[RMDB]
RNA sequence: GGGAACGACUCGAGUAGAGUCGAAAACGAAGCCGCGGGCAUAGCGUACCUAUCUGGACGCUCAUUCAUACUUGAGGGCGGUUUCGGCCUCGUAUACGAGGCUAUUAAAUCACACCGUCUUCCUAGCCGUGAUCGCCCCGUUCGCGGGGCGAUCACGAAAAGAAACAACAACAACAAC
Reactivity to 2A3 in 0.01 (KOAc 150mM, MgCl2 10mM, bicine 150mM(pH8.5), 24C), signal-to-noise 1, nucleotides 027 to 126: c070g000a010a000g030c000c000g040c100g040g040g010c040a090u210a140g000c000g030u300a300c000c000u090a240u100c180u180g000g000a010c000g070c000u000c040a060u100u300c000a000u100a300c230u140u170g000a040g000g040g000c000g000g000u000u000u040c010g010g000c000c000u060c000g200u170a090u070a300c070g000a000g000g000c000u000a000u060u160a010a010a010u030c000a000c010a000c000c060g000u000c000u040u000c000c030u000a000g110c040